[RMDB]
RNA sequence: GGGAACGACUCGAGUAGAGUCGAAAAAACGCGGUAACCUCCACCUGGAGCAAUCCCAAAUAGGCAGGCGAUGAAGCGGCCCGCUGAGUCUGCGGGUAGGGAGCUGGAGCCGGCUGGUAACAGCCGGAAGCUAGCGUUCAUUCGUGAACGCUAGCUUAAAAGAAACAACAACAACAAC
Reactivity to 2A3 in 0.01 (KOAc 150mM, MgCl2 10mM, bicine 150mM(pH8.5), 24C), signal-to-noise 1, nucleotides 027 to 126: a000a020c020g010c040g120g000u020a020a030c000c000u000c000c000a050c050c120u130g040g020a010g000c050a040a110u090c000c000c000a010a080a070u060a000g040g000c020a010g000g030c020g070a110u180g050a010a020g020c010g000g000c010c010c010g000c030u040g030a010g080u020c050u100g000c040g000g000g000u120a150g020g030g040a060g000c020u010g000g050a020g000c000c000g000g000c000u010g000g000u050a090a070c000a000g000c000c050g010g010
Reactivity to DMS in 0.01 (KOAc 150mM, MgCl2 10mM, bicine 150mM(pH8.5), 24C), signal-to-noise 3, nucleotides 027 to 126: a120a120c090g010c100g010g030u000a030a090c070c000u020c040c040a120c080c090u020g020g030a060g030c120a190a040u020c020c000c050a060a140a100u030a080g000g010c000a020g010g020c020g030a130u050g010a090a090g000c060g000g010c060c060c040g010c010u000g010a130g010u000c040u000g010c010g020g020g000u010a080g000g000g010a080g010c030u010g000g010a120g010c000c000g020g000c010u000g000g000u060a140a110c000a000g020c000c000g000g010